[RMDB]
Structure probing data (2A3 and DMS) for a 177-nucleotide construct.
For DMS the reverse transcriptase was MarathonRT.
Values cover nucleotides 27 to 126.
RNA sequence: GGGAACGACUCGAGUAGAGUCGAAAAGAUAUGGAGUAGCUACCCACCGAACUACAAUUUCUGUCGGAAACGACAGAAAUUGCGAGGCUACUCCUAAGUCAAAGGUUAUUGGUUCGCCAAUAACCAACAAUUAGGAUCGGUUCGCCGAUCCUAAUUGAAAAGAAACAACAACAACAAC
Reactivity to 2A3 in 0.01 (KOAc 150mM, MgCl2 10mM, bicine 150mM(pH8.5), 24C), signal-to-noise 2, nucleotides 027 to 126: g010a010u110a150u220g010g020a000g010u000a000g030c020u100a220c050c040c070a050c070c040g060a130a120c100u170a050c300a010a010u000u010u010c000u000g010u000c010g000g020a050a050a060c010g010a000c000a000g010a030a010a000u010u000g000c020g010a010g000g000c000u000a000c000u000c000c000u000a010a010g060u070c120a190a030a070g000g010u020u010a010u010u010g030g010u030u140c210g020c090c000a000a020u010a000a000c000c000a000a010
Reactivity to DMS in 0.01 (KOAc 150mM, MgCl2 10mM, bicine 150mM(pH8.5), 24C), signal-to-noise 3, nucleotides 027 to 126: g010a090u010a080u020g000g000a030g010u000a010g000c000u000a120c040c020c050a300c140c060g020a040a060c070u000a220c010a010a000u000u000u000c000u000g030u000c000g000g000a100a060a110c000g010a010c000a000g000a000a000a000u000u000g000c070g000a140g030g000c000u000a010c000u000c000c000u000a000a090g010u010c100a060a130a100g010g010u000u010a000u000u000g010g000u010u010c250g010c000c010a000a000u010a000a010c000c000a050a070